[RMDB]
RNA sequence: GGGAACGACUCGAGUAGAGUCGAAAAUAUGGGCAGUUCGCUGCCCAUACGAGCGGAGUCCGGCACUAUGAGCCCGCAGCGUUGGUGCGAAGCCGCGGUGCAGAGACCAAGCCUUCGGGCUUGGUAAUACAUGGCAUUAGUUCGCUAAUGCCAUGUAAAAAGAAACAACAACAACAAC
Reactivity to DMS in 0.01 (KOAc 150mM, MgCl2 10mM, bicine 150mM(pH8.5), 24C), signal-to-noise 4, nucleotides 027 to 126: u010a010u000g000g000g000c000a010g010u000u020c220g020c010u000g020c000c000c000a000u000a000c050g010a110g000c030g000g000a130g000u000c030c030g000g010c020a060c060u000a090u010g010a160g000c010c030c030g010c050a040g010c040g010u000u000g020g010u000g000c060g010a120a150g010c020c030g000c080g000g010u000g010c010a120g000a170g000a040c000c000a000a000g000c000c000u000u020c230g030g010g000c000u000u000g000g010u010a020a040
Reactivity to 2A3 in 0.01 (KOAc 150mM, MgCl2 10mM, bicine 150mM(pH8.5), 24C), signal-to-noise 2, nucleotides 027 to 126: u060a020u010g000g010g000c000a010g000u030u080c160g030c180u000g000c000c010c000a000u000a000c010g010a020g000c020g020g040a050g050u050c030c010g060g010c040a010c040u070a070u220g030a030g000c000c010c040g000c040a030g020c050g080u150u300g050g040u060g040c050g080a100a010g000c000c020g090c050g020g050u040g000c050a000g050a010g020a140c000c000a000a010g000c000c020u050u090c170g030g020g000c030u000u000g010g000u000a010a000